[RMDB]
RNA sequence: GGGAACGACUCGAGUAGAGUCGAAAACUGGAAUGACUGCUUCUCCAGCCUGUCCUGACAGGGAUGUCCUUGGCCAUUGGCAAGGGUAGCUCUUCCUGGUUCCUUUCCUCUUGAGCCACACAGGAAGCAGUUAGCAGAAAUUCGUUUCUGCUAACUGAAAAGAAACAACAACAACAAC
Reactivity to 2A3 in 0.01 (KOAc 150mM, MgCl2 10mM, bicine 150mM(pH8.5), 24C), signal-to-noise 2, nucleotides 027 to 126: c010u030g020g050a070a050u110g060a090c070u080g040c010u090u040c030u050c040c010a030g010c010c010u020g020u030c000c030u020g030a030c030a030g060g000g020a050u060g060u060c000c030u040u060g120g010c030c020a200u110u260g010g000c030a030a040g020g000g040u050a020g010c010u000c000u040u010c000c010u020g020g000u040u070c000c000u030u020u040c020c020u080c030u070u130g060a040g030c010c020a050c010a020c020a070g060g000a030a020g040
Reactivity to DMS in 0.01 (KOAc 150mM, MgCl2 10mM, bicine 150mM(pH8.5), 24C), signal-to-noise 8, nucleotides 027 to 126: c040u000g010g010a070a080u000g010a110c110u000g010c060u000u000c040u000c030c040a130g010c030c030u000g000u000c020c050u000g010a100c130a050g000g000g000a090u010g000u000c020c130u000u000g010g010c020c040a140u010u000g020g020c040a040a060g010g010g010u000a050g000c050u000c030u000u010c020c020u000g000g010u000u000c020c010u000u000u000c030c010u000c090u010u000g010a090g010c020c040a050c140a080c070a050g000g000a080a060g000
The data come from the RNA Mapping Database (RMDB), library OK2TST.
Chemical mapping of a 177-nucleotide RNA with 2A3 and DMS.
DMS (dimethyl sulfate) methylates the pairing face of unpaired adenines and cytosines.
Reactivities are given for positions 27 through 126.